[RMDB]
RNA sequence: GGGAACGACUCGAGUAGAGUCGAAAACGCUGGGCUUUAAUGAAGCACUGGAGGCAAUACUCCCCACCGAGUCUGAAGCGCGCACGGACUCGAGGUAUUGCCGUUGAAAGUGGGUUAAAGCCUGUGCUGAAGCGCGCACGGCAACCGAAAGGUGCGAGCACUGUAGUAUCUUCGGAUACUACAGUGCAAAAGAAACAACAACAACAAC
Reactivity to DMS in 0.01 (KOAc 150mM, MgCl2 10mM, bicine 150mM(pH8.5), 24C), signal-to-noise 1, nucleotides 027 to 156: c040g080c010u000g090g000g060c040u010u000u050a050a170u000g000a190a140g000c030a070c060u010g010g020a060g030g090c010a020a050u000a160c080u010c300c120c090c020a300c090c010g020a050g010u020c000u000g000a080a100g030c000g000c000g020c000a300c010g040g000a000c000u000c000g050a090g020g010u000a050u000u000g010c140c000g040u020u000g010a130a050a040g000u000g000g000g020u000u000a030a110a080g010c000c010u000g000u000g000c000u020g000a120a010g090c040g010c010g080c000a300c020g000g000c000a020a160c010c010g000a040a050a090g010g020u000g010c010g010a200
Reactivity to 2A3 in 0.01 (KOAc 150mM, MgCl2 10mM, bicine 150mM(pH8.5), 24C), signal-to-noise 2, nucleotides 027 to 156: c030g000c020u040g020g000g010c000u030u000u030a040a010u180g170a290a080g290c010a010c000u020g020g040a020g000g000c000a000a000u000a000c010u100c050c060c000c010a020c000c000g010a010g000u000c010u040g040a190a040g010c000g010c010g000c010a020c000g010g000a000c000u000c000g000a000g010g000u000a000u000u000g000c010c010g010u020u000g010a000a010a000g000u000g050g120g020u000u010a000a000a000g000c000c000u000g000u010g000c000u020g010a150a040g000c000g000c000g000c000a000c010g010g000c000a030a010c000c020g050a080a060a030g030g000u030g000c010g010a020
Structure probing data (DMS and 2A3) for a 207-nucleotide construct. The RNA was probed in 150 mM KOAc, 10 mM MgCl2 and 150 mM bicine (pH 8.5) at 24 C. 2A3 adducts were read by reverse transcription with SuperScript II with manganese. The 2A3 profile rests on 5,351 reads. For DMS, 1,349 sequencing reads were counted.